[RMDB]
RNA sequence: GGGAACGACUCGAGUAGAGUCGAAAAUCAUCGUUCUUCGGAACGAUGAAGUAUAACGCGGGCUCCGGACACAGGCGUAGCUGGCCUGGGAUAGACACAGUAUGGGGCAAACUUUCGAGUUUGCCAAGCUAUAAUACAAGUUCGCUUGUAUUAUAGCAAAAGAAACAACAACAACAAC
Reactivity to DMS in 0.01 (KOAc 150mM, MgCl2 10mM, bicine 150mM(pH8.5), 24C), signal-to-noise 9, nucleotides 027 to 126: u000c000a000u000c000g010u000u000c000u000u010c200g020g000a010a010c000g000a000u000g000a010a060g010u010a080u010a080a080c110g010c050g010g000g000c030u000c030c030g010g010a110c090a100c070a030g000g010c030g020u010a080g010c060u000g010g000c020c010u000g000g000g000a090u000a070g010a080c100a060c090a070g010u000a100u000g010g010g000g000c000a000a000a010c000u000u000u010c180g010a030g010u000u000u000g010c000c010a030a040
Reactivity to 2A3 in 0.01 (KOAc 150mM, MgCl2 10mM, bicine 150mM(pH8.5), 24C), signal-to-noise 6, nucleotides 027 to 126: u020c000a000u000c000g010u010u000c010u040u040c240g090g000a000a000c000g000a000u000g000a000a000g000u040a100u040a160a040c060g000c030g030g050g000c010u020c030c020g040g020a030c050a010c010a090g040g000c010g040u030a030g010c050u040g050g000c000c010u030g010g000g020a110u100a070g070a010c020a000c010a110g090u130a130u220g170g000g000g000c010a000a000a000c030u080u090u110c250g050a010g000u000u010u010g000c000c000a000a000